[RMDB]
RNA sequence: GGGAACGACUCGAGUAGAGUCGAAAAAGUGUCCUCCUGAGGUGAAGAUAGUUGACGUGGGGCCCAGAGACGGCCUCCGGUCUCAGUGUCCUCCUGAGGUGAAGAUAGUUGACGUGGGGCCCAGAGACAAACAUUAACUCUUCGGAGUUAAUGUUUGAAAAGAAACAACAACAACAAC
Reactivity to DMS in 0.01 (KOAc 150mM, MgCl2 10mM, bicine 150mM(pH8.5), 24C), signal-to-noise 6, nucleotides 027 to 126: a070g020u010g000u000c020c020u000c030c020u010g010a120g010g010u010g010a090a090g000a070u000a070g010u010u010g010a070c080g020u010g010g010g000g010c010c010c090a160g000a170g010a100c190g020g000c030c000u000c010c030g000g000u000c020u000c050a070g000u000g010u010c020c020u010c100c020u000g000a080g010g010u010g020a080a070g010a080u000a080g010u000u000g000a090c110g010u000g010g000g000g000c010c010c030a090g000a140g010a200
Reactivity to 2A3 in 0.01 (KOAc 150mM, MgCl2 10mM, bicine 150mM(pH8.5), 24C), signal-to-noise 2, nucleotides 027 to 126: a010g180u130g020u050c010c010u040c020c010u060g050a030g010g070u090g040a120a050g040a160u090a060g120u040u090g030a030c070g070u180g020g020g010g010c000c010c050a130g050a000g020a170c080g000g040c000c010u000c040c000g000g020u030c010u000c030a040g020u040g040u100c010c010u050c010c010u030g030a030g030g030u070g030a040a020g050a070u170a030g050u040u120g060a040c060g020u060g000g040g000g000c000c010c000a040g030a000g000a080